[RMDB]
RNA sequence: GGGAACGACUCGAGUAGAGUCGAAAAAAGAGUGACAUAAUUAUAUUUGCGUUUCAGUGACACGUCUCUGGCAACUGUACGAAAGAUAUUAUCAUCUAACAUUUGUUGAGUACUUAACAAUGUGCUGGUGCUACUCUGAUUUCGAUCAGAGUAGCACAAAAGAAACAACAACAACAAC
Reactivity to DMS in 0.01 (KOAc 150mM, MgCl2 10mM, bicine 150mM(pH8.5), 24C), signal-to-noise 2, nucleotides 027 to 126: a070a040g000a060g030u000g000a090c110a100u000a090a070u010u000a060u000a090u030u000u010g000c060g000u000u000u000c040a030g020u000g000a130c090a090c150g000u010c100u010c080u000g000g020c120a100a020c050u000g010u000a050c060g010a020a050a040g000a060u010a020u000u010a090u000c100a050u020c080u000a090a040c020a030u000u000u000g000u000u010g000a040g000u000a100c210u010u000a030a060c030a020a010u000g000u000g020c160u010g000
Reactivity to 2A3 in 0.01 (KOAc 150mM, MgCl2 10mM, bicine 150mM(pH8.5), 24C), signal-to-noise 1, nucleotides 027 to 126: a020a030g110a030g020u050g010a020c010a000u160a060a060u300u040a080u030a070u190u050u130g110c020g000u040u070u000c030a080g000u040g050a040c020a020c180g040u010c060u010c020u080g010g000c000a040a070c030u010g010u030a010c010g020a110a110a030g020a010u060a030u060u100a040u080c030a030u000c000u040a080a050c000a050u150u000u170g010u000u060g080a030g040u060a120c120u010u040a060a000c000a000a080u010g020u060g060c040u020g140